[RMDB]
RNA sequence: GGGAACGACUCGAGUAGAGUCGAAAAAAUUAGAGGCAAUUUGAAAUAAUUUAAAUUAGCUCAACCCUACUGCACUUACCGAAUUAGAUAACGGUGUAGUAGGGGUAAAUUCUCCGCAUUCGGUGCGCAACCACCUGAGGUUUCGACCUCAGGUGAAGUUGUAAUAUACGUUCGCGUAUAUUACAACAAAAGAAACAACAACAACAAC
Reactivity to 2A3 in 0.01 (KOAc 150mM, MgCl2 10mM, bicine 150mM(pH8.5), 24C), signal-to-noise 3, nucleotides 027 to 156: a000a010u140u110a060g010a050g080g030c010a010a010u040u010u040g030a080a090a070u230a110a250u110u110u110a030a050a010u060u040a040g010c000u020c020a010a020c000c010c000u000a000c000u000g000c010a000c010u020u060a030c040c020g050a100a080u090u050a070g030a090u090a200a050c090g010g000u000g000u000a000g000u000a000g010g000g000g000u000a000a000a000u010u010c030u000c010c020g020c030a010u040u030c040g080g000u020g000c030g000c050a060a050c040c000a000c000c000u000g000a000g000g020u040u070u090c160g060a050c000c000u000c000a000g000g000u000g000a010a000
Reactivity to DMS in 0.01 (KOAc 150mM, MgCl2 10mM, bicine 150mM(pH8.5), 24C), signal-to-noise 2, nucleotides 027 to 156: a060a120u000u000a090g000a170g000g020c020a040a030u000u010u000g000a050a120a220u030a110a130u010u000u020a010a040a030u000u010a070g040c010u000c050a090a070c010c000c000u000a010c000u000g000c020a030c000u000u000a030c100c000g000a100a180u000u000a070g000a110u010a060a120c300g010g040u000g020u000a000g030u010a000g020g000g000g010u000a020a050a110u000u000c020u000c020c050g010c070a140u000u000c070g020g000u010g000c000g000c080a090a110c060c020a020c030c000u010g000a000g000g000u000u000u010c300g010a030c010c000u000c010a000g010g000u000g010a000a030
Chemical mapping of a 207-nucleotide RNA with 2A3 and DMS. DMS adducts were read by reverse transcription with MarathonRT. For 2A3 the reverse transcriptase was SuperScript II with manganese. For DMS, 2,930 sequencing reads were counted.